The record gives the reactivity of an RNA of 207 nucleotides to DMS and 2A3. The 2A3 profile rests on 8,436 reads. For 2A3 the reverse transcriptase was SuperScript II with manganese. The reactions ran in a buffer of 150 mM KOAc, 10 mM MgCl2 and 150 mM bicine (pH 8.5), at 24 C.
[RMDB]
RNA sequence: GGGAACGACUCGAGUAGAGUCGAAAACACAAUUCUCUAAGCGAUGAGAAGCGUGUGGAAAAUUAGGGAAGUGCUACGGCUAUAAUCCUAAGAAAGCUUAUCUACAAGCGGAGGUAUUCUCAGAACGAAAACCAUUUGGCGUUCGCGCCAAAUGGAAGUUAUCAACCUAGUUCGCUAGGUUGAUAACAAAAGAAACAACAACAACAAC
Reactivity to DMS in 0.01 (KOAc 150mM, MgCl2 10mM, bicine 150mM(pH8.5), 24C), signal-to-noise 3, nucleotides 027 to 156: c020a060c020a040a240u000u000c010u010c020u000a120a130g030c120g020a230u010g020a060g010a050a040g010c190g030u000g030u000g000g010a000a050a090a120u000u000a030g000g010g030a100a080g020u010g030c020u000a090c170g050g010c010u010a110u000a090a110u000c010c020u000a060a050g010a120a070a210g000c060u000u000a060u000c080u000a130c070a030a070g000c050g000g000a070g020g010u000a130u000u000c020u000c030a120g000a070a100c060g000a120a060a080a140c010c000a050u000u000u000g010g020c000g010u000u010c300g030c010g000c000c000a010a000a000u000g010g000a000a050
Reactivity to 2A3 in 0.01 (KOAc 150mM, MgCl2 10mM, bicine 150mM(pH8.5), 24C), signal-to-noise 8, nucleotides 027 to 156: c030a000c010a040a070u040u020c010u000c000u070a210a150g120c080g120a140u110g010a070g010a020a010g010c030g020u040g000u070g030g010a060a100a040a050u040u030a030g000g010g030a060a090g070u010g040c020u020a030c140g050g000c010u020a020u050a170a070u060c010c000u010a030a010g070a050a070a000g020c010u050u060a040u120c060u090a090c050a110a020g020c030g030g030a020g030g050u070a110u100u020c030u010c020a040g050a130a040c070g040a060a060a050a070c000c000a000u000u000u000g010g000c000g030u030u050c230g000c000g000c060c000a000a000a000u000g000g000a000a000